[RMDB]
RNA sequence: GGGAACGACUCGAGUAGAGUCGAAAAGAGUCCCGUCACGGAUGGCGGUGAUAGGAGUAACGGCUGGUUGGCACAGCCAUCGACGUUCCUGUUUGACAAUGAAACUGGUGCGUUCGCACCUCAAGAAGCGCCUUAUUUGAUUCGUCAAAUAAGGCGCAAAAGAAACAACAACAACAAC
Reactivity to DMS in 0.01 (KOAc 150mM, MgCl2 10mM, bicine 150mM(pH8.5), 24C), signal-to-noise 2, nucleotides 027 to 126: g000a200g000u020c000c000c000g030u000c010a060c010g050g040a050u000g000g000c000g000g020u020g000a060u000a010g000g010a110g000u000a050a080c110g010g000c040u000g020g000u000u000g000g000c080a200c050a020g010c000c020a030u010c000g050a300c040g000u000u000c020c000u000g000u000u000u020g000a160c210a140a110u000g020a050a090a080c030u020g000g000u020g000c010g030u020u020c240g000c010a070c060c000u000c220a070a210g000a200a290
Reactivity to 2A3 in 0.01 (KOAc 150mM, MgCl2 10mM, bicine 150mM(pH8.5), 24C), signal-to-noise 2, nucleotides 027 to 126: g140a040g090u010c000c070c000g030u080c000a030c030g050g040a060u020g020g050c020g000g020u060g000a040u070a120g060g000a060g150u130a150a010c020g160g020c070u080g000g050u150u040g120g000c070a000c020a060g070c000c000a000u000c010g040a000c010g000u010u000c030c010u000g110u010u070u100g120a070c150a090a110u160g090a030a020a000c080u040g020g000u090g000c060g080u200u110c110g000c000a000c000c000u000c020a030a020g010a010a090

The data come from the RNA Mapping Database (RMDB), libraries RFM100 and RFMREP. The record gives the reactivity of an RNA of 177 nucleotides to DMS and 2A3. The RNA was probed in 150 mM KOAc, 10 mM MgCl2 and 150 mM bicine (pH 8.5) at 24 C. For 2A3 the reverse transcriptase was SuperScript II with manganese. Values cover nucleotides 27 to 126. For DMS the reverse transcriptase was MarathonRT.